Record summary
The record gives the reactivity of an RNA of 207 nucleotides to DMS and 2A3. 2A3 adducts were read by reverse transcription with SuperScript II with manganese. The reactions ran in a buffer of 150 mM KOAc, 10 mM MgCl2 and 150 mM bicine (pH 8.5), at 24 C. The DMS profile rests on 4,153 reads. It was measured as part of the RMDB library OK3TST. For DMS the reverse transcriptase was MarathonRT.
RNA sequence: GGGAACGACUCGAGUAGAGUCGAAAAGCUCUGUUGAACCUGAUGAACGCCUGCGUCCAGUGCCGCGUCAUUUUUUACCCCCGCUGCAAGUUUGGCCUCAACAAAUUCAGAAACUGGUGCCCCUCCAACAUCCCGCCCCUCAUCUGCGGGUUCGAGGGUGGAUUAAAUUAUUCGUAAUUUAAUCCACAAAAGAAACAACAACAACAAC
Reactivity to DMS in 0.01 (KOAc 150mM, MgCl2 10mM, bicine 150mM(pH8.5), 24C), signal-to-noise 2, nucleotides 027 to 156: g020c010u000c030u000g020u000u020g010a060a110c040c000u010g000a110u000g020a070a080c050g000c030c020u010g020c030g020u010c040c030a140g030u010g010c040c050g060c030g000u020c080a030u010u000u020u010u010u020a210c040c020c000c030c040g050c030u010g050c010a090a070g000u010u000u000g000g030c010c020u000c050a090a110c020a050a030a120u010u000c020a110g000a080a060a050c060u010g000g030u010g000c020c020c000c000u000c020c010a050a070c030a090u000c010c010c010g000c020c050c050c000u010c110a100u000c040u000g020c030g020g010g010u000u000c030g000a120g020g010
Reactivity to 2A3 in 0.01 (KOAc 150mM, MgCl2 10mM, bicine 150mM(pH8.5), 24C), signal-to-noise 1, nucleotides 027 to 156: g040c020u020c000u060g000u040u030g060a140a070c020c040u030g030a090u040g020a100a010c030g080c020c050u050g000c070g000u090c060c030a070g030u040g060c030c020g000c020g090u070c080a090u000u040u010u080u070u300a240c020c010c000c030c040g020c020u010g010c020a000a090g000u030u110u120g010g010c000c030u100c030a000a090c010a050a140a090u130u110c010a020g080a140a150a050c060u070g050g000u010g020c030c000c000c000u030c010c000a030a040c000a030u030c000c010c000g020c010c010c000c010u010c000a090u010c030u040g020c020g030g000g040u040u040c030g010a000g000g060